[RMDB]
RNA sequence: GGGAACGACUCGAGUAGAGUCGAAAACGCUGCGGCGACGUCGGACGUACACAGGGCCGAGGCUAUCAGAAGGCUCCGGCGGGCGCGUUCCCGCUGCACCGCCGAGGGGACGCCAGCCAAGAACGGCCAAUAAUAAAGUCUUCGGACUUUAUUAUUGAAAAGAAACAACAACAACAAC
Reactivity to DMS in 0.01 (KOAc 150mM, MgCl2 10mM, bicine 150mM(pH8.5), 24C), signal-to-noise 9, nucleotides 027 to 126: c070g010c040u000g010c070g010g010c040g010a070c060g010u010c040g010g010a090c080g010u010a070c140a100c130a120g000g010g010c010c010g010a130g010g010c030u000a080u010c140a120g000a140a160g000g010c010u000c040c010g010g010c010g000g000g000c100g000c020g000u000u000c010c010c010g000c040u000g000c020a070c030c020g000c010c010g000a140g000g000g000g010a100c080g010c040c040a080g010c010c020a090a130g010a090a120c060g000g000c030
Reactivity to 2A3 in 0.01 (KOAc 150mM, MgCl2 10mM, bicine 150mM(pH8.5), 24C), signal-to-noise 5, nucleotides 027 to 126: c030g000c020u040g000c020g050g000c010g020a040c030g030u060c060g030g070a100c030g030u140a040c080a020c030a140g050g020g000c010c010g030a050g040g000c020u050a070u220c040a060g150a300a040g070g000c010u010c020c010g010g000c000g000g030g000c050g000c010g010u020u020c010c000c000g000c050u130g000c040a160c100c030g000c010c020g020a120g010g030g020g000a000c040g000c020c020a010g010c010c010a080a030g090a140a030c020g010g010c000
The record gives the reactivity of an RNA of 177 nucleotides to DMS and 2A3. For DMS, 29,911 sequencing reads were counted. For DMS the reverse transcriptase was MarathonRT. For 2A3 the reverse transcriptase was SuperScript II with manganese. The reactions ran in a buffer of 150 mM KOAc, 10 mM MgCl2 and 150 mM bicine (pH 8.5), at 24 C.